Overview:
The record gives the reactivity of an RNA of 207 nucleotides to DMS.
RNA sequence: GGGAACGACUCGAGUAGAGUCGAAAAGCCAUGAGUCGCAACGCAAAGCCGCGGCAAGUGGAGUUAGCGAGAAGAGACUAGGCUUUGGUUUCUUCGAGUGAAGCGGUCACCAAUCAGGUGUGGUAGUAGGAGCCUGCAUGGUUCGCCAUGCAGGCAAACACCCGUAUAAGUUCGCUUAUACGGGUGUAAAAGAAACAACAACAACAAC
Reactivity to DMS in 0.01 (KOAc 150mM, MgCl2 10mM, bicine 150mM(pH8.5), 24C), signal-to-noise 1, nucleotides 027 to 156: g030c050c010a100u010g000a300g010u010c000g000c010a050a150c070g000c060a070a090a300g000c050c030g040c000g030g000c010a050a220g030u030g010g000a110g010u000u000a170g000c020g010a300g000a070a010g000a060g000a040c020u010a040g030g030c160u000u000u000g010g010u010u000u010c020u000u000c010g000a300g040u000g000a080a130g020c090g000g000u000c000a120c020c000a040a190u000c140a100g000g020u000g030u010g030g020u030a130g000u000a100g020g010a110g010c020c000u000g080c000a010u000g010g030u000u010c300g000c040c000a010u010g060c000a020g030g020c010a000a040
The RNA was probed in 150 mM KOAc, 10 mM MgCl2 and 150 mM bicine (pH 8.5) at 24 C. For DMS, 1,673 sequencing reads were counted. Reactivities are given for positions 27 through 156. DMS adducts were read by reverse transcription with MarathonRT.